[RMDB]
An RNA of 207 nucleotides, treated with 2A3 and read out base by base. 2A3 adducts were read by reverse transcription with SuperScript II with manganese. The reactions ran in a buffer of 150 mM KOAc, 10 mM MgCl2 and 150 mM bicine (pH 8.5), at 24 C.
RNA sequence: GGGAACGACUCGAGUAGAGUCGAAAAGUCUGACUUAAGGGAUUGGUGUUGACGCCCGGGUCCUGCGCAACAGGAACCCACGAAUCCUGUCAGGUCCGGAAGGAAGCAGCAGUAAGUGGUUAUUCUUGUGUGCCGCAGGGAAGCCUAGGCCGAGCCAGUGGCUUACUAGGUUCGCCUAGUAAGCCACAAAAGAAACAACAACAACAAC
Reactivity to 2A3 in 0.01 (KOAc 150mM, MgCl2 10mM, bicine 150mM(pH8.5), 24C), signal-to-noise 1, nucleotides 027 to 156: g040u020c030u050g100a130c060u160u140a110a100g110g040g090a190u120u080g000g000u030g010u300u030g010a040c060g000c000c030c020g000g010g020u300c000c000u000g000c020g000c000a000a020c000a020g020g020a010a020c010c000c010a000c000g050a020a020u110c020c000u000g020u010c000a000g030g000u010c000c000g140g060a030a110g040g020a000a000g040c040a020g010c020a000g010u040a150a020g010u020g040g000u060u140a010u040u000c000u020u020g020u030g170u050g050c120c030g010c020a000g000g000g010a020a000g000c000c000u000a020g000g000c020c000g030a000g000c000c000a000